[RMDB]
RNA sequence: GGGAACGACUCGAGUAGAGUCGAAAACCUGGUUGGCAAUCAGGUGUCGAGUGCAAGUGCACAAGGGAGCUUGACUGUGAGACUGACAGGUCGAGCAGGGACGAAAGUCGGGACUAGUGAUCCGGCAUCGGAAUCAUAGAUUCGUCUAUGAUUCCGAAAAAGAAACAACAACAACAAC
Reactivity to DMS in 0.01 (KOAc 150mM, MgCl2 10mM, bicine 150mM(pH8.5), 24C), signal-to-noise 9, nucleotides 027 to 126: c000c000u000g000g010u010u000g000g010c110a120a080u010c030a020g010g020u000g010u000c040g010a210g020u010g010c040a160a090g020u020g010c050a040c040a070a140g000g000g010a160g000c030u000u000g000a070c010u000g010u000g000a230g010a050c040u010g010a130c300a090g000g000u000c000g010a220g010c010a030g010g000g010a090c090g000a050a060a080g020u000c010g000g000g000a060c050u020a110g010u010g000a100u020c000c010g000g010c060a160
Reactivity to 2A3 in 0.01 (KOAc 150mM, MgCl2 10mM, bicine 150mM(pH8.5), 24C), signal-to-noise 5, nucleotides 027 to 126: c000c000u000g040g030u030u030g050g030c050a030a040u010c010a040g030g000u030g120u110c070g040a040g020u050g030c030a210a100g060u070g110c020a030c010a110a060g080g010g020a060g020c010u040u040g040a040c010u000g020u040g050a040g020a040c010u050g020a060c060a100g070g000u020c010g000a010g000c010a010g020g010g030a030c060g060a120a050a000g010u020c010g010g010g020a020c040u070a060g050u030g090a040u020c000c000g000g010c010a030